This 177-nucleotide RNA was probed chemically with DMS and 2A3. The RNA was probed in 150 mM KOAc, 10 mM MgCl2 and 150 mM bicine (pH 8.5) at 24 C.

[RMDB]
RNA sequence: GGGAACGACUCGAGUAGAGUCGAAAAACACACCCUAAUCGCAACAUCAGGGUUGCGGCACGCCGGAAAAACGACACGGAACGUCAGGAAGGGGUCAAUGGCCGUUACGCUAAUUCAGUAAGCCUGGCCCAUGGGCACUAUUCGUAGUGCCCAUGGGAAAAGAAACAACAACAACAAC
Reactivity to DMS in 0.01 (KOAc 150mM, MgCl2 10mM, bicine 150mM(pH8.5), 24C), signal-to-noise 2, nucleotides 027 to 126: a050c260a090c220a110c010c010c020u030a090a070u000c030g000c040a000a000c050a100u010c120a190g000g060g020u020u000g020c010g030g000c170a070c080g010c010c050g000g020a030a120a080a130a090c110g010a020c030a080c030g020g000a070a060c070g030u010c020a090g010g000a120a070g010g020g000g010u030c050a020a040u020g020g000c000c080g010u000u010a010c160g090c040u000a060a040u010u020c100a100g050u010a070a110g010c000c020u000g020g000
Reactivity to 2A3 in 0.01 (KOAc 150mM, MgCl2 10mM, bicine 150mM(pH8.5), 24C), signal-to-noise 3, nucleotides 027 to 126: a000c060a010c000a050c060c000c000u030a040a080u090c040g010c000a010a000c000a070u190c060a040g190g020g070u000u010g000c000g000g000c000a010c020g050c000c010g010g030a060a040a050a010a020c050g060a000c020a010c110g040g050a090a030c010g030u050c030a040g040g120a090a030g060g010g000g020u060c050a040a130u020g030g020c000c030g120u110u080a070c020g020c020u060a110a090u150u130c050a030g040u040a060a020g030c000c020u030g000g030
The 2A3 profile rests on 3,176 reads. It was measured as part of the RMDB libraries RFM100 and RFMREP.